[RMDB]
RNA sequence: GGGAACGACUCGAGUAGAGUCGAAAAGCUGAUGCUGUUGCACCGGCAAUUUCUCCGCCAAUGCGCAACAGUAACUGCGGAUAGAUUUUGUUGGUCUCUGGUGCUGCUGUCGACUUUGCUGCAGUGAUGCUGACUAAUCAUUCGUGAUUAGUCAGCAAAAAGAAACAACAACAACAAC
Reactivity to DMS in 0.01 (KOAc 150mM, MgCl2 10mM, bicine 150mM(pH8.5), 24C), signal-to-noise 3, nucleotides 027 to 126: g030c000u000g010a120u000g000c000u000g000u000u010g000c030a050c010c300g020g010c010a060a080u010u000u000c100u020c140c200g030c000c060a110a080u000g020c070g000c020a030a040c030a040g010u000a030a050c080u000g010c020g010g010a160u000a130g000a070u010u000u000u000g000u000u000g030g000u000c060u000c060u010g020g020u010g000c010u000g010c030u000g000u010c040g010a120c160u010u000u000g020c020u010g030c020a050g030u000g010a110
Reactivity to 2A3 in 0.01 (KOAc 150mM, MgCl2 10mM, bicine 150mM(pH8.5), 24C), signal-to-noise 2, nucleotides 027 to 126: g040c010u010g020a110u060g060c020u010g000u000u030g000c040a000c030c070g020g020c010a020a050u160u160u050c110u020c040c060g010c020c020a070a110u230g060c030g000c050a010a120c000a000g000u000a000a080c040u020g010c020g000g000a060u090a180g090a100u080u070u050u050g020u040u050g010g030u000c010u000c070u070g080g060u110g020c020u030g000c010u040g090u160c010g020a180c060u110u130u130g020c030u020g020c020a020g010u040g070a060